[RMDB]
RNA sequence: GGGAACGACUCGAGUAGAGUCGAAAACUACUCAUUCGUUCGCGAAUGAGUAGAAGUGGUAAUGCGAAACACUGCCAGGUAACAAAUCAAUCCUCCCACGGUGAGCUUUCUUUUCACCAUAAUCCACAUCUCCGGCUUUGCUGGGGCUUGGGCCUUUUUACUUCUCGCGUUGUUCGGAGCGGGGGCUCAAGAUUGAAAAAUGCAGCUCUCCCUACGUACUGUCAUUGUUGUGAGUUCUGCGCAUUAACGCAAAAACCUGGGGUGUUAACAAGACAUUCGUGUCUUGUAAAAGAAACAACAACAACAAC
Reactivity to DMS in 0.01 (KOAc 150mM, MgCl2 10mM, bicine 150mM(pH8.5), 24C), signal-to-noise 2, nucleotides 027 to 266: c000u000a000c000u000c000a020u000u000c000g030u000u020c220g080c000g040a030a030u000g000a000g020u000a000g010a070a060g000u010g000g000u010a100a070u000g010c090g010a150a040a010c000a010c040u010g030c000c020a000g020g000u020a150a150c160a080a060a100u020c070a130a080u000c070c070u000c020c020c000a100c160g020g040u000g020a060g000c260u020u020u020c010u010u000u010u010c000a020c030c020a300u010a120a040u010c070c080a080c080a080u030c040u000c000c020g040g040c030u020u000u020g010c010u000g010g000g000g000c090u000u020g020g000g000c020c000u010u000u040u010u000a090c100u010u010c020u020c010g010c070g000u000u010g020u030u010c090g020g000a100g030c290g020g000g000g000g020c010u000c020a000a040g000a110u010u000g000a030a120a040a070a140u000g000c060a060g020c050u000c000u000c010c060c040u020a050c090g010u020a060c090u010g010u000c100a110u020u030g020u010u020g000u000g010a120g000u000u000c040u000g000c010g030c100a030u030u020a070a110c080g020c050a090a110a060a090a040c020c000u000g020g010g000g010u000g000u020u000a040
Reactivity to 2A3 in 0.01 (KOAc 150mM, MgCl2 10mM, bicine 150mM(pH8.5), 24C), signal-to-noise 1, nucleotides 027 to 266: c000u000a000c000u000c020a040u000u000c000g000u000u220c250g000c000g040a020a020u000g020a020g030u040a000g000a020a000g000u020g000g000u000a050a050u090g040c060g100a100a000a020c080a000c040u210g300c000c010a000g000g010u100a080a080c040a140a160a090u160c040a040a040u040c040c080u040c000c050c000a000c040g000g010u000g040a000g030c030u100u120u130c040u040u120u160u030c000a020c040c010a010u120a040a070u050c020c020a040c020a130u020c020u010c040c060g160g020c100u300u230u300g000c010u040g000g030g000g030c000u040u000g000g000g060c010c000u180u190u120u090u180a060c000u060u080c010u060c000g090c030g090u170u300g180u300u300c050g020g000a000g000c010g000g000g000g000g000c000u000c000a000a000g000a000u000u130g070a050a040a000a000a000u020g010c010a040g000c010u030c000u030c130c020c000u040a070c050g050u000a050c140u090g170u150c040a070u110u120g090u090u030g010u000g010a010g010u050u000c010u040g000c000g020c010a000u040u150a030a080c020g030c080a030a210a050a130a090c000c000u000g000g000g000g040u000g000u000u020a000